[RMDB]
This 177-nucleotide RNA was probed chemically with 2A3 and DMS. Reactivities are given for positions 27 through 126. 2A3 adducts were read by reverse transcription with SuperScript II with manganese. For DMS, 6,933 sequencing reads were counted. Source: RMDB library M2PK90, as collected in RNAgym. The reactions ran in a buffer of 150 mM KOAc, 10 mM MgCl2 and 150 mM bicine (pH 8.5), at 24 C.

RNA sequence: GGGAACGACUCGAGUAGAGUCGAAAAAAAAUGAGUGCGUGGUAGCACAAACCAGACCAAUCUUCGGCACAUGGUCGCACAAGUACAGCUUCGCCUGUACAAAGCGAACUACAACAACAACAAGCAACACACAGUAAUAGUUCGCUAUUACUGUGUGAAAAGAAACAACAACAACAAC
Reactivity to 2A3 in 0.01 (KOAc 150mM, MgCl2 10mM, bicine 150mM(pH8.5), 24C), signal-to-noise 6, nucleotides 027 to 126: a000a000a010a040u150g000a020g010u020g000c030g020u050g040g070u110a040g020c020a010c010a060a040a010c020c010a010g060a040c020c010a030a090u060c050u150u100c090g070g010c070a040c020a160u090g040g000u020c010g020c020a070c020a150a090g000u000a010c000a010g000c020u140u160c120g040c060c000u010g010u020a000c000a050a030a000g010c010g030a040a010c010u060a040c020a080a010c000a010a000c010a020a000c010a030a020g080c020a050a060
Reactivity to DMS in 0.01 (KOAc 150mM, MgCl2 10mM, bicine 150mM(pH8.5), 24C), signal-to-noise 7, nucleotides 027 to 126: a030a030a080a070u000g010a140g010u000g010c040g040u010g000g010u000a090g020c040a040c060a040a080a090c030c020a070g000a090c020c020a070a090u010c120u000u000c080g000g010c080a070c120a110u000g020g010u000c010g040c040a050c130a080a170g000u000a010c010a010g000c010u010u010c230g020c200c000u010g000u000a010c010a040a080a110g000c020g000a020a040c040u000a070c080a020a050c040a040a030c100a020a030c070a090a100g010c240a060a080